[RMDB]
RNA sequence: GGGAACGACUCGAGUAGAGUCGAAAAAUCGGGCACGUGGGGCUGGAGCUCGGGCUGCUGCUCUCGCGCCACCCGGUCGAGCUCCACCUCGCCGACUCGCGCGCCGCGCAGCUCACGCCCGAGCGGCGCUUCUCACUGAUUUCGAUCAGUGAGAAGCAAAAGAAACAACAACAACAAC
Reactivity to DMS in 0.01 (KOAc 150mM, MgCl2 10mM, bicine 150mM(pH8.5), 24C), signal-to-noise 7, nucleotides 027 to 126: a110u010c060g010g000g030c060a100c170g010u000g010g010g000g020c240u010g000g000a110g020c010u000c010g030g010g030c040u000g010c050u000g010c030u000c080u010c100g010c030g020c030c090a090c200c070c030g000g000u010c050g020a030g000c070u010c070c070a050c130c010u000c020g010c010c030g000a080c070u000c300g000c090g010c020g010c070c090g010c080g020c060a050g000c040u000c130a110c170g000c000c020c000g000a030g010c020g010g010c070
Reactivity to 2A3 in 0.01 (KOAc 150mM, MgCl2 10mM, bicine 150mM(pH8.5), 24C), signal-to-noise 4, nucleotides 027 to 126: a000u070c030g000g020g000c070a030c140g030u100g010g030g030g010c170u100g080g050a020g000c010u020c010g020g010g000c030u040g000c010u040g010c010u020c010u030c070g010c020g000c020c000a020c020c010c020g000g060u180c080g020a000g000c030u050c050c010a040c020c020u000c000g020c000c000g020a030c020u050c090g030c000g000c000g050c090c050g010c010g000c010a010g000c020u060c040a030c040g000c010c010c000g000a000g010c020g040g000c020